Notes
The record gives the reactivity of an RNA of 177 nucleotides to DMS and 2A3.
RNA sequence: GGGAACGACUCGAGUAGAGUCGAAAAUUCAAGCGAUUCGUCGCUUGAACCUGACGAGACUCAAGCAAAAUUGUUCCCUUUUGCUUUUGCUUUCCUCUUUUAAGUAGUAGUGCUUCGGCACUACUAAUAUAUCUAGUCUAUUCGUAGACUAGAUAUAAAAAGAAACAACAACAACAAC
Reactivity to DMS in 0.01 (KOAc 150mM, MgCl2 10mM, bicine 150mM(pH8.5), 24C), signal-to-noise 6, nucleotides 027 to 126: u000u000c000a010a000g010c000g000a020u000u010c190g020u000c000g020c000u000u000g000a010a040c050c030u000g010a050c130g000a090g000a060c010u000c040a020a020g000c060a030a010a030a050u010u020g000u000u000c000c000c000u000u000u000u000g000c010u000u000u000u000g010c120u000u000u000c020c110u000c040u010u000u000u000a080a170g010u000a010g000u000a010g010u000g010c000u000u010c190g020g010c000a000c000u000a000c000u000a010a060
Reactivity to 2A3 in 0.01 (KOAc 150mM, MgCl2 10mM, bicine 150mM(pH8.5), 24C), signal-to-noise 2, nucleotides 027 to 126: u020u010c000a000a000g000c000g010a010u010u130c210g030u010c000g150c010u000u010g000a010a010c000c020u060g080a060c090g020a020g030a040c000u010c040a010a000g000c020a020a040a080a070u170u260g030u040u030c010c000c030u000u030u000u000g000c000u020u000u020u050g000c010u020u050u030c020c040u050c020u050u100u100u100a190a090g040u020a010g000u000a000g000u010g000c000u020u040c180g080g010c000a000c000u000a000c000u000a000a010